An RNA of 177 nucleotides, treated with DMS and read out base by base.
RNA sequence: GGGAACGACUCGAGUAGAGUCGAAAAGAUAUGGAUCGUUAAGAAGCCCUACGUUGAAAACCUGUGCGUACUCGGAAACGAGUACGCACAGGUUGGAGUAGGGACCCUUUGUGCGCGAUCCUAAGUCCAAUAUUCUAGUCUUCGGACUAGAAUAUUGAAAAGAAACAACAACAACAAC
Reactivity to DMS in 0.01 (KOAc 150mM, MgCl2 10mM, bicine 150mM(pH8.5), 24C), signal-to-noise 3, nucleotides 027 to 126: g000a070u000a300u000g010g010a010u000c010g020u000u000a160a300g000a060a150g000c000c000c000u000a010c010g010u000u010g000a270a120a030a000c000c000u010g050u000g010c000g050u000a010c000u000c000g020g000a080a100a270c030g020a040g030u000a000c010g020c000a000c000a000g010g020u000u000g010g010a050g000u010a010g010g020g000a020c130c300c040u010u000u010g030u010g040c300g010c010g000a020u000c000c010u010a040a150g010u000c040
The RNA was probed in 150 mM KOAc, 10 mM MgCl2 and 150 mM bicine (pH 8.5) at 24 C. Reactivities are given for positions 27 through 126. Source: RMDB library TTRINS, as collected in RNAgym.